[RMDB]
RNA sequence: GGGAACGACUCGAGUAGAGUCGAAAACAUGACGCGGCCGUCUGGUUCGAGGAUAUGACCCCCGCCGAGCUGGAGGUUGUCUUCCCGACUACGGACGCCAAGCUGAACUACCUGUCGCGGACGCAGCGGCUGGCCUCCCUCCUGACGUACGCCGGGCACGGAUAUUCCAUUUCGAUGGAAUAUCCGUAAAAGAAACAACAACAACAAC
Reactivity to 2A3 in 0.01 (KOAc 150mM, MgCl2 10mM, bicine 150mM(pH8.5), 24C), signal-to-noise 1, nucleotides 027 to 156: c050a050u120g040a010c070g020c040g010g000c040c000g000u050c050u050g070g010u090u110c050g030a140g060g010a030u080a040u210g060a040c010c000c000c000c030g070c070c100g130a100g070c030u070g020g000a050g040g000u030u040g020u030c090u050u040c000c010c000g010a020c010u090a030c030g010g010a000c010g000c000c010a020a020g040c030u050g060a040a070c040u040a080c030c030u040g040u140c040g000c060g100g020a090c050g000c090a000g000c020g010g020c010u020g020g000c000c040u020c020c000c000u050c010c000u050g020a040c020g060u070a000c010g030c050c010g020g000g030c070
Structure probing data (2A3) for a 207-nucleotide construct. 2A3 adducts were read by reverse transcription with SuperScript II with manganese. The reactions ran in a buffer of 150 mM KOAc, 10 mM MgCl2 and 150 mM bicine (pH 8.5), at 24 C.